[RMDB]
RNA sequence: GGGAACGACUCGAGUAGAGUCGAAAAGAUGUAAUGCCAGCUAUGACAUCAUGAGGUGAUAGGAAUUUUUCAGCUCCAGCAUAAUCUUAUGGGACCAUCGUCCUAUAUGCCAUCUGUCAUUGACCAACAUAAAAGUACGAUUCGUCGUACUUUUAUGAAAAGAAACAACAACAACAAC
Reactivity to 2A3 in 0.01 (KOAc 150mM, MgCl2 10mM, bicine 150mM(pH8.5), 24C), signal-to-noise 9, nucleotides 027 to 126: g050a020u110g020u160a090a020u060g010c010c010a010g010c040u070a030u130g030a030c010a030u060c020a050u100g060a020g000g050u040g020a050u080a070g100g070a110a110u110u080u020u060u110c020a020g010c020u000c020c010a020g000c020a070u070a120a040u090c020u050u070a040u060g010g000g010a010c020c030a150u100c100g010u000c000c000u040a040u010a010u090g010c000c010a060u050c040u030g040u030c010a030u010u060g050a060c020c010a020a060
Reactivity to DMS in 0.01 (KOAc 150mM, MgCl2 10mM, bicine 150mM(pH8.5), 24C), signal-to-noise 9, nucleotides 027 to 126: g000a070u010g010u000a060a050u010g010c020c020a040g010c130u000a060u000g010a050c030a030u010c060a070u000g000a080g010g020u000g000a070u000a070g010g020a050a060u000u000u010u010u010c130a090g000c060u000c020c050a080g020c070a060u000a070a070u010c070u000u010a040u000g000g000g010a030c070c190a080u010c160g010u000c010c010u000a040u000a030u000g000c060c030a030u000c030u000g000u000c040a050u000u000g010a130c050c060a080a210
This 177-nucleotide RNA was probed chemically with 2A3 and DMS.
It was measured as part of the RMDB library OK2TST.
For 2A3 the reverse transcriptase was SuperScript II with manganese.
For DMS, 34,475 sequencing reads were counted.
Values cover nucleotides 27 to 126.